About this RNA
An RNA of 177 nucleotides, treated with 2A3 and read out base by base. The reactions ran in a buffer of 150 mM KOAc, 10 mM MgCl2 and 150 mM bicine (pH 8.5), at 24 C.
RNA sequence: GGGAACGACUCGAGUAGAGUCGAAAAAUUCAAGCUGCAGCCAUGCCAAUAAAAUUGGUGAAAUUAUUCGUUAGUAAUGAACUCAUGAAUGCUUGUAGCCAUGAAAGUUCAAUAAUUGAAUAAUUUACUUUGGACCAAUCUUCGGAUUGGUCCAAAGAAAAGAAACAACAACAACAAC
Reactivity to 2A3 in 0.01 (KOAc 150mM, MgCl2 10mM, bicine 150mM(pH8.5), 24C), signal-to-noise 1, nucleotides 027 to 126: a050u070u070c070a010a010g000c050u170g040c100a000g010c000c000a150u100g000c020c000a030a000u200a100a250a020a090u030u060g040g000u040g120a100a000a000u030u010a010u000u000c000g000u000u000a040g030u080a180a160u150g000a000a000c000u000c040a000u060g180a300a130u060g030c000u090u090g060u300a000g030c020c000a000u010g050a000a080a100g000u000u000c040a090a070u050a010a000u080u150g000a000a000u000a020a000u000u030u070a060